[RMDB]
RNA sequence: GGGAACGACUCGAGUAGAGUCGAAAACAGACCGACGGUGGUCAUGCGGACCAGGUUGGCGAAAGUCGGCGGGGUGCGCAGGCCCUGCGGAGUCUGGACUUUCUUCUGGGACAGCGCGGUCAUGAGCCCAACGAGGGUAUUUCGAUACCCUCGUUGGAAAAGAAACAACAACAACAAC
Reactivity to 2A3 in 0.01 (KOAc 150mM, MgCl2 10mM, bicine 150mM(pH8.5), 24C), signal-to-noise 1, nucleotides 027 to 126: c010a030g040a060c010c020g090a220c070g140g030u280g070g000u030c040a210u050g000c030g050g080a010c010c010a010g110g020u030u030g010g020c060g060a090a050a010g010u000c000g000g020c080g030g070g010g010u110g020c020g000c000a010g000g000c000c000c000u020g000c040g020g000a070g050u040c020u040g040g020a020c010u080u100u050c000u100u050c070u060g020g000g070a010c020a030g040c030g000c040g030g000u070c030a050u140g090a040g050c000
Reactivity to DMS in 0.01 (KOAc 150mM, MgCl2 10mM, bicine 150mM(pH8.5), 24C), signal-to-noise 1, nucleotides 027 to 126: c030a040g000a040c000c010g000a150c070g010g040u010g050g000u000c000a070u000g030c010g000g000a050c010c000a040g000g030u000u010g010g010c010g000a120a080a110g030u000c000g010g000c000g010g000g010g010u010g010c010g040c030a030g000g000c000c000c010u000g010c050g030g000a090g010u010c040u000g010g010a100c160u020u000u000c040u000u020c090u000g010g000g020a080c060a040g000c040g010c070g000g010u000c040a060u000g000a140g010c050
Record summary: Source: RMDB library OK2TRN, as collected in RNAgym. The record gives the reactivity of an RNA of 177 nucleotides to 2A3 and DMS. Values cover nucleotides 27 to 126. DMS adducts were read by reverse transcription with MarathonRT.